RNA sequence: GGGAACGACUCGAGUAGAGUCGAAAAAUCACUGCAGAGGAUCCAAAGAAAAACGAAACGUCUGGAUGGGACACAAAUAGAAGGCUUAUUAGCACGCAACUCAUUCAACUUGCGUCGGUUCACCUCGGAGGGUAUUACGUUUCGACGUAAUACCCUCAAAAGAAACAACAACAACAAC
Reactivity to DMS in 0.01 (KOAc 150mM, MgCl2 10mM, bicine 150mM(pH8.5), 24C), signal-to-noise 2, nucleotides 027 to 126: a090u030c060a110c040u000g030c040a090g000a070g000g010a020u000c070c080a110a090a150g020a110a010a020a110a050c090g010a100a050a030c050g000u000c160u000g000g000a020u020g000g000g000a150c130a060c200a020a110a040u010a120g000a100a210g010g010c000u000u030a050u000u000a010g000c100a050c120g020c080a020a040c020u010c100a020u010u000c130a020a070c190u000u010g010c100g020u010c000g040g000u030u000c020a070c010c020u000c070g010
Reactivity to 2A3 in 0.01 (KOAc 150mM, MgCl2 10mM, bicine 150mM(pH8.5), 24C), signal-to-noise 4, nucleotides 027 to 126: a000u030c010a010c020u080g020c040a050g010a010g040g000a030u040c040c050a040a070a030g160a030a050a050a030a010c030g060a070a040a020c040g060u020c040u050g080g020a080u050g000g040g010a020c010a000c060a080a110a010u150a120g220a150a030g070g000c010u090u100a070u090u180a200g000c070a020c020g060c020a030a090c020u010c050a010u100u060c030a030a030c010u020u070g010c010g000u030c030g040g000u070u050c060a120c090c010u040c020g030
Overview:
An RNA of 177 nucleotides, treated with DMS and 2A3 and read out base by base. 2A3 adducts were read by reverse transcription with SuperScript II with manganese. For DMS the reverse transcriptase was MarathonRT. The RNA was probed in 150 mM KOAc, 10 mM MgCl2 and 150 mM bicine (pH 8.5) at 24 C.